[RMDB]
The record gives the reactivity of an RNA of 177 nucleotides to DMS. The DMS profile rests on 1,816 reads.

RNA sequence: GGGAACGACUCGAGUAGAGUCGAAAACUAGGACUUACGAUUGUAUGAUACCUAGAUUAAGUUUUUGUAGUCCCGUUGUUAGAAAGGCAUGUUUAGUUGAAAGUCUUAUCGCAGUUCAGAAGCGAAAAAAUUAUGUCGCUUUCGAGCGACAUAAUUUAAAAGAAACAACAACAACAAC
Reactivity to DMS in 0.01 (KOAc 150mM, MgCl2 10mM, bicine 150mM(pH8.5), 24C), signal-to-noise 2, nucleotides 027 to 126: c020u000a000g000g000a100c010u000u000a000c000g010a150u050u070g050u040a010u000g000a150u030a050c000c000u020a010g010a170u000u030a090a100g000u000u000u080u070u010g010u000a070g000u000c000c010c020g000u000u000g000u000u040a100g010a060a030a060g000g020c100a150u000g000u010u000u000a130g040u020u000g030a020a050a080g000u010c030u000u000a040u000c000g000c000a050g100u000u040c190a120g030a140a060g000c040g010a000a020a040